[RMDB]
RNA sequence: GGGAACGACUCGAGUAGAGUCGAAAAGAUAUGGAUGUAGGAGGAGGUAUAGCCGUCGGAAACGACUGGCUGCGAACUCCUGACAUCCUAAGUCAAAGUGUGCAACUGGUUCGCCAGUUGCACACAACAAUCAAACCCAGUUCGCUGGGUUUGAUUGAAAAGAAACAACAACAACAAC
Reactivity to 2A3 in 0.01 (KOAc 150mM, MgCl2 10mM, bicine 150mM(pH8.5), 24C), signal-to-noise 2, nucleotides 027 to 126: g020a010u060a020u100g020g010a000u030g000u030a010g010g040a010g010g060a080g000g110u240a060u060a100g000c010c000g000u000c010g000g010a020a010a010c010g050a010c140u300g000g020c000u000g000c030g050a060a000c000u020c000c000u000g000a010c000a020u010c010c000u010a050a010g020u010c050a050a110a160g020u020g000u000g000c000a000a000c020u010g000g110u080u180c250g060c080c000a010g000u000u000g000c000a000c000a000c000a000a000
Reactivity to DMS in 0.01 (KOAc 150mM, MgCl2 10mM, bicine 150mM(pH8.5), 24C), signal-to-noise 4, nucleotides 027 to 126: g010a030u000a280u010g000g010a020u000g000u000a020g010g010a010g020g020a090g040g010u000a070u010a010g010c000c010g020u000c000g010g010a060a080a150c000g010a010c000u010g060g000c000u000g010c080g010a080a280c000u000c010c000u010g000a020c000a010u000c000c000u000a020a100g000u000c020a110a080a150g010u000g010u000g000c000a010a010c000u000g010g000u000u010c280g010c000c000a000g010u000u000g000c000a000c000a000c000a010a170